[RMDB]
Chemical mapping of a 177-nucleotide RNA with 2A3 and DMS. For DMS the reverse transcriptase was MarathonRT.
RNA sequence: GGGAACGACUCGAGUAGAGUCGAAAACGGUGGCGUUGAUGGACGCUCGUUCUAUCGCUGCGACUGCGGCAAACGGUGGCUAUUUAACCUCUGCCAGCGAACUUGAUUGCUGGGACAACGUGCCGGACAGGUCGGCAUGGUUCGCCAUGCCGACCUGAAAAGAAACAACAACAACAAC
Reactivity to 2A3 in 0.01 (KOAc 150mM, MgCl2 10mM, bicine 150mM(pH8.5), 24C), signal-to-noise 1, nucleotides 027 to 126: c060g010g050u050g180g060c000g040u030u000g060a070u070g010g000a010c010g040c020u050c020g020u040u000c020u050a200u190c060g000c050u030g030c030g270a210c240u240g020c040g040g000c030a000a020a020c010g000g040u060g000g000c010u020a080u110u150u080a030a070c020c000u100c080u030g120c010c000a010g010c020g060a030a070c070u070u300g150a280u080u140g030c010u030g080g000g000a010c020a000a030c010g030u010g060c010c030g000g020a010
Reactivity to DMS in 0.01 (KOAc 150mM, MgCl2 10mM, bicine 150mM(pH8.5), 24C), signal-to-noise 1, nucleotides 027 to 126: c030g000g010u000g040g010c050g000u010u010g010a050u000g000g010a060c030g000c050u000c050g040u010u030c170u010a080u000c160g000c010u000g010c110g000a200c300u000g010c040g000g010c050a080a060a060c020g040g010u000g000g010c030u000a070u010u030u010a110a160c120c160u010c070u000g030c010c000a000g000c000g040a060a150c260u010u020g000a140u000u000g000c030u000g000g010g000a210c080a010a050c040g000u000g040c020c010g000g030a200
Values cover nucleotides 27 to 126. The reactions ran in a buffer of 150 mM KOAc, 10 mM MgCl2 and 150 mM bicine (pH 8.5), at 24 C.